[RMDB]
RNA sequence: GGGAACGACUCGAGUAGAGUCGAAAACGGUUACGCCUUCUUUACCGUUAUCAAGGAAGGUACUCGGCCAUGCUACGGGAAGCAUUAUUCCUUAGGCGCAUGUCGCCGCCAGCAUGGUGUGAGGGGAAAAAGUAUGCUGGGUUCGCCCAGCAUACAACAUUAUGCCACUCUUCGGAGUGGCAUAAUGAAAAGAAACAACAACAACAAC
Reactivity to DMS in 0.01 (KOAc 150mM, MgCl2 10mM, bicine 150mM(pH8.5), 24C), signal-to-noise 3, nucleotides 027 to 156: c020g000g010u010u000a030c050g020c010c000u000u010c010u000u010u000a020c000c000g000u010u010a040u000c100a020a030g010g030a040a020g030g000u010a050c020u000c000g010g010c000c000a020u000g010c010u000a110c140g000g000g020a040a040g000c170a150u000u000a140u000u000c010c010u000u000a090g020g040c000g010c040a120u000g020u010c030g030c020c010g020c080c050a060g010c010a020u000g010g000u000g010u000g000a040g010g000g010g000a040a030a100a140a130g010u000a000u000g010c000u000g010g010g030u000u010c300g030c020c000c000a020g000c010a000u010a000c010a060a130
Reactivity to 2A3 in 0.01 (KOAc 150mM, MgCl2 10mM, bicine 150mM(pH8.5), 24C), signal-to-noise 6, nucleotides 027 to 156: c000g000g000u010u030a030c070g010c000c000u000u000c010u010u030u030a010c010c010g270u120u090a050u080c090a010a000g030g000a000a000g000g010u030a040c000u010c010g020g010c000c000a000u000g000c000u030a050c060g010g000g010a010a010g050c080a200u100u130a140u230u050c000c020u040u100a070g010g000c000g010c050a160u270g130u300c030g020c040c000g030c030c030a010g000c000a000u000g000g050u070g150u160g030a030g010g020g010g080a010a120a030a010a000g000u000a000u000g000c000u000g020g000g000u040u030c120g110c030c000c000a000g000c000a000u000a000c000a000a000